[RMDB]
RNA sequence: GGGAACGACUCGAGUAGAGUCGAAAAUCCAUCUGAAAAACAGUAAACGCAAACGACGAACAGUUUGCUCUAGCAGCUUAAUCGCUCGCUAGAUCUCACACCAGCUUGCCGAUGGGCUGGGCAGGGUCAAACCUGCAGUGGGAUCAUCGCACAUCGGCCUCAUCAUUGCGUUCGCGCAAUGAUGAGGAAAAGAAACAACAACAACAAC
Reactivity to 2A3 in 0.01 (KOAc 150mM, MgCl2 10mM, bicine 150mM(pH8.5), 24C), signal-to-noise 3, nucleotides 027 to 156: u000c000c000a030u050c070u100g110a050a100a040a100a000c030a040g080u160a080a140a040c090g010c010a000a020a020c020g210a040c110g110a210a010c030a050g000u000u000u020g020c000u010c000u010a000g020c000a000g010c010u050u070a080a030u190c110g000c000u010c000g010c000u000a000g010a010u000c000u000c000a010c000a020c000c000a010g000c000u010u020g010c020c000g000a000u010g010g010g000c000u010g010g020g020c000a000g050g040g010u100c040a070a030a050c020c000u010g020c010a000g020u000g000g030g040a040u140c040a110u080c130g060c100a030c000a030u000c000g000g000

This 207-nucleotide RNA was probed chemically with 2A3. Reactivities are given for positions 27 through 156. The 2A3 profile rests on 2,313 reads.